[RMDB]
RNA sequence: GGGAACGACUCGAGUAGAGUCGAAAAUCAGCGUCCUUCUGACCGGACUUCAUCAGCUUGGCGAUGAUGUAGCUGUCCCGCUUGCGCUCGAUGGGGAGCUUGAAGUCGUGAAGUUUCUCCAGGACCGAUAGCCGAGAUGAUUCGUCAUCUCGGCUAUAAAAGAAACAACAACAACAAC
Reactivity to DMS in 0.01 (KOAc 150mM, MgCl2 10mM, bicine 150mM(pH8.5), 24C), signal-to-noise 2, nucleotides 027 to 126: u010c050a050g020c100g050u000c000c000u040u000c060u000g000a100c070c080g030g000a030c070u000u000c030a100u000c040a110g000c090u000u030g010g020c090g000a070u000g000a020u020g050u000a040g000c090u000g010u020c000c000c000g000c080u010u020g000c080g030c040u010c080g050a070u000g000g010g000g020a050g000c000u010u000g020a110a060g030u010c070g000u000g010a060a080g000u000u010u050c010u010c010c020a110g000g020a120c110c070g000
Reactivity to 2A3 in 0.01 (KOAc 150mM, MgCl2 10mM, bicine 150mM(pH8.5), 24C), signal-to-noise 3, nucleotides 027 to 126: u080c030a000g000c000g030u100c030c000u080u070c100u090g080a070c060c100g070g030a030c000u080u030c010a080u010c010a010g050c030u100u280g080g020c030g040a050u050g010a030u080g060u130a000g010c030u050g050u130c010c000c000g000c040u080u040g010c010g000c030u050c100g090a130u010g030g000g020g000a030g040c000u030u070g110a090a030g060u120c090g090u060g030a050a000g010u050u220u130c030u000c000c000a010g000g050a020c040c000g040